[RMDB]
RNA sequence: GGGAACGACUCGAGUAGAGUCGAAAAAGCAGUUACGACUGCAGUGCCAGAAAUGAUGAUUAUCUUCAUGUCUCUUCUCUGACUGUUUGGUGAAGAGAGAUUUGUGAUAUCUGAUCUUCAUGCACAAGCUCCAUCCGCAGUUCGCUGCGGAUGGAGCAAAAGAAACAACAACAACAAC
Reactivity to 2A3 in 0.01 (KOAc 150mM, MgCl2 10mM, bicine 150mM(pH8.5), 24C), signal-to-noise 3, nucleotides 027 to 126: a000g000c000a000g040u070u140a120c230g040a000c040u000g000c020a050g000u000g000c040c030a000g000a050a000a000u060g020a010u030g000a010u010u100a000u170c040u110u060c010a010u030g270u020c000u000c000u040u010c060u000c040u060g090a160c070u150g290u300u160u300g090g030u060g030a060a000g020a000g000a000g020a010u030u050u040g050u020g000a010u000a000u060c000u010g030a010u010c030u040u000c020a050u120g010c010a000c020a000a060